[RMDB]
RNA sequence: GGGAACGACUCGAGUAGAGUCGAAAAUCAUCUGGCCUUCCGCGACCCAUCGGACCCGCCCGUGGGCCAGGCGCUGCCCCCAGGCGUUCAAAAACAGCUGCUGCAUGUCUGCGGCGGGGCCGGCCGGCCCCUCCGCUAUCUUCGGAUAGCGGAGGGGAAAAGAAACAACAACAACAAC
Reactivity to 2A3 in 0.01 (KOAc 150mM, MgCl2 10mM, bicine 150mM(pH8.5), 24C), signal-to-noise 1, nucleotides 027 to 126: u090c030a010u040c040u030g040g000c000c000u040u020c070c000g020c020g060a170c030c000c010a060u040c010g030g010a030c000c000c000g070c050c030c000g010u020g010g000g040c040c000a020g050g010c030g020c020u040g010c040c000c000c020c040a050g210g000c060g090u160u130c090a010a070a050a060a080c030a030g040c050u270g000c000u060g010c040a120u090g060u000c020u010g010c020g040g000c000g000g000g030g000c070c100g000g000c030c000g110g000